[RMDB]
RNA sequence: GGGAACGACUCGAGUAGAGUCGAAAACACCAACCGCUCCACCACAGAGAGCCAGCUGUGACACUCGUGGAGCCGUCACCCCAUACCCGAACAACUAUGGAACCUGCGAGUGCAAGAGCCAAGUCAAGCAGUAUAUAUAGUUCGCUAUAUAUACUGCAAAAGAAACAACAACAACAAC
Reactivity to DMS in 0.01 (KOAc 150mM, MgCl2 10mM, bicine 150mM(pH8.5), 24C), signal-to-noise 9, nucleotides 027 to 126: c150a200c080c050a090a080c130c260g000c020u000c010c020a070c050c100a050c050a050g000a130g000a120g010c060c090a060g010c030u000g010u000g010a170c090a070c100u010c100g020u010g010g000a050g020c020c070g000u000c100a080c020c010c000c020a100u010a110c040c010c010g010a080a060c110a040a060c080u010a060u000g010g000a050a060c040c020u000g020c040g000a060g010u010g000c040a040a040g000a090g000c020c060a050a100g010u000c100a100a150
Reactivity to 2A3 in 0.01 (KOAc 150mM, MgCl2 10mM, bicine 150mM(pH8.5), 24C), signal-to-noise 6, nucleotides 027 to 126: c060a020c020c010a030a030c030c030g020c020u010c010c010a060c020c010a020c030a030g080a010g020a050g140c020c020a040g020c010u020g010u030g070a040c030a030c140u090c050g020u010g020g000a000g010c010c010g020u010c030a110c000c010c010c010a030u070a110c010c000c020g030a050a030c020a030a000c030u060a110u250g030g010a030a040c010c010u020g010c020g050a070g080u120g020c010a040a030g010a010g030c010c020a030a010g060u070c010a060a070
The record gives the reactivity of an RNA of 177 nucleotides to DMS and 2A3. For DMS, 10,633 sequencing reads were counted. The data come from the RNA Mapping Database (RMDB), library OK2TRN. Conditions: 150 mM KOAc, 10 mM MgCl2 and 150 mM bicine (pH 8.5), 24 C. DMS adducts were read by reverse transcription with MarathonRT.